[RMDB]
RNA sequence: GGGAACGACUCGAGUAGAGUCGAAAACAAACAGCCCCACUGAAGCCCCUUCCGGGAGGGCACCGAGCCCUGGGCAGCACCCCUCCCUCCCGGCAGGCCGGUCUGUGGGACGUGCAGGACGUGCUGCGAGUAGAUACAGAUUCGUCUGUAUCUACUCAAAAGAAACAACAACAACAAC
Reactivity to DMS in 0.01 (KOAc 150mM, MgCl2 10mM, bicine 150mM(pH8.5), 24C), signal-to-noise 7, nucleotides 027 to 126: c050a090a110a120c060a150g020c020c000c000c010a030c020u010g000a120a170g000c040c030c010c010u000u000c020c010g010g000g010a010g010g000g020c290a030c080c070g010a130g000c040c030c040u000g010g000g020c050a060g000c060a170c040c020c010c050u000c010c000c000u000c000c000c000g010g010c090a010g010g010c120c150g020g000u000c020u000g010u000g000g000g010a020c020g010u000g010c050a030g010g010a120c130g020u000g010c010u000g010c100
Reactivity to 2A3 in 0.01 (KOAc 150mM, MgCl2 10mM, bicine 150mM(pH8.5), 24C), signal-to-noise 2, nucleotides 027 to 126: c020a010a110a000c020a060g060c030c040c010c000a010c010u060g050a150a060g080c040c010c000c000u010u010c000c000g000g000g000a000g010g010g000c060a040c040c080g090a050g040c050c010c020u060g020g140g020c000a010g070c050a140c000c010c000c010u030c000c000c010u010c000c000c010g000g020c000a000g000g030c020c040g030g000u010c010u030g000u030g000g000g030a010c030g010u040g000c010a020g030g030a090c080g030u080g020c010u010g010c010